[RMDB]
RNA sequence: GGGAACGACUCGAGUAGAGUCGAAAACAAAUGCAGUGGUGACUUUGAUUUAUAGCAAGAACAAGUUUUCCAUUUGCUCUAUAUGGAAACGUAAAGAGAUUUUGAAACUGCUUUAACAAGGGCUGCCUACAUCACAGUCGUUCGCGACUGUGAUGUAAAAAGAAACAACAACAACAAC
Reactivity to DMS in 0.01 (KOAc 150mM, MgCl2 10mM, bicine 150mM(pH8.5), 24C), signal-to-noise 1, nucleotides 027 to 126: c050a050a120a100u010g010c050a030g020u010g010g030u030g000a060c010u010u000u000g020a130u000u010u010a050u020a080g010c060a100a080g040a090a150c300a110a110g000u010u000u010u010c010c060a010u000u010u000g010c100u010c060u030a060u000a030u000g020g010a050a070a070c030g000u010a000a060a070g000a110g010a070u000u000u000u020g010a050a070a060c010u000g000c000u000u000u000a060a030c030a050a020g030g000g010c080u000g000c050c070